[RMDB]
RNA sequence: GGGAACGACUCGAGUAGAGUCGAAAAGAUAGCAUUAUAAGUGAUGAUUGAUAUAUGAAUACAAAAAGGGCUAAAUCAUUCUUUUUAAUGCAGAUCGACUUAGCUUUGAUAAGACAUAUAUUGAACAGACUGAGCUGGAGUUCGCUCCAGCUCAGUCAAAAGAAACAACAACAACAAC
Reactivity to 2A3 in 0.01 (KOAc 150mM, MgCl2 10mM, bicine 150mM(pH8.5), 24C), signal-to-noise 1, nucleotides 027 to 126: g150a150u220a000g020c000a000u050u100a030u090a140a050g070u130g120a080u160g000a000u060u060g000a000u090a000u000a000u080g220a180a030u120a030c130a000a210a090a000a210g200g000g000c010u160a000a000a000u000c000a000u060u050c000u040u040u060u150u000a110a090u120g030c000a000g000a050u000c140g120a000c000u010u020a000g000c000u000u000u070g060a100u080a060a050g140a070c030a100u220a000u000a000u100u100g130a030a000c020a020

An RNA of 177 nucleotides, treated with 2A3 and read out base by base. Conditions: 150 mM KOAc, 10 mM MgCl2 and 150 mM bicine (pH 8.5), 24 C. For 2A3, 336 sequencing reads were counted. It was measured as part of the RMDB library OK1LIB.